[RMDB]
RNA sequence: GGGAACGACUCGAGUAGAGUCGAAAAGAUAUGGACGGUGGCAGGCAACAGCGUAUGGGUCGGAAACGACCUUUACGACAUGCCUGUCACCGUCCUAAGUCAAAAGCACACUCUUCGGAGUGUGCAACUUCCAGCCCAUGUUCGCAUGGGCUGGAAGAAAAGAAACAACAACAACAAC
Reactivity to DMS in 0.01 (KOAc 150mM, MgCl2 10mM, bicine 150mM(pH8.5), 24C), signal-to-noise 1, nucleotides 027 to 126: g030a090u000a210u010g000g000a000c000g030g010u000g000g000c000a020g000g020c030a150a120c300a190g020c000g010u000a000u000g000g000g010u030c000g000g000a020a020a150c000g000a000c010c000u010u000u010a000c000g000a000c120a300u010g050c000c010u040g030u000c000a010c000c000g030u000c000c000u010a010a010g000u020c030a120a130a110a110g020c010a000c010a010c000u010c000u010u030c300g000g000a030g010u000g000u000g000c010a000a050
Record summary: Conditions: 150 mM KOAc, 10 mM MgCl2 and 150 mM bicine (pH 8.5), 24 C. The record gives the reactivity of an RNA of 177 nucleotides to DMS. Values cover nucleotides 27 to 126. For DMS the reverse transcriptase was MarathonRT. The data come from the RNA Mapping Database (RMDB), library TTRDES.